The record gives the reactivity of an RNA of 177 nucleotides to DMS and 2A3.
It was measured as part of the RMDB library RFMREP.
The DMS profile rests on 1,312 reads.
DMS adducts were read by reverse transcription with MarathonRT.

[RMDB]
RNA sequence: GGGAACGACUCGAGUAGAGUCGAAAAUACGUUGGAGGUAAACAAAUACGGGUCCUGCUUAGGAGAAAAGAAAAACGUCUUACAGCCAGUGUCUAAACUCCAAACAACGGAAUGUAUCAAUGAGACCGGUUUAAACAAAGUUCGCUUUGUUUAAACCAAAAGAAACAACAACAACAAC
Reactivity to DMS in 0.01 (KOAc 150mM, MgCl2 10mM, bicine 150mM(pH8.5), 24C), signal-to-noise 2, nucleotides 027 to 126: u000a060c110g020u000u010g030g000a080g030g000u030a080a080a150c140a080a090a130u010a040c090g000g010g000u010c040c040u000g000c080u000u010a070g010g000a090g000a100a040a080a100g010a070a100a080a090a110c170g020u000c030u000u000a070c140a070g000c030c040a040g000u020g010u000c030u000a050a110a160c050u010c010c030a060a030a120c120a090a040c060g010g000a080a100u000g010u000a020u000c070a060a040u000g000a110g010a170c100c080
Reactivity to 2A3 in 0.01 (KOAc 150mM, MgCl2 10mM, bicine 150mM(pH8.5), 24C), signal-to-noise 1, nucleotides 027 to 126: u130a020c030g030u020u060g060g000a030g000g040u090a070a050a040c030a010a230a000u150a100c090g010g020g070u040c020c010u000g070c030u070u060a020g000g030a050g070a090a180a080a050g160a070a100a030a010a010c040g100u010c010u010u040a020c020a020g060c030c010a050g010u040g000u010c010u000a040a000a020c010u000c030c000a010a050a060c130a110a020c000g030g060a070a020u090g050u060a120u160c060a100a060u120g020a020g030a030c050c110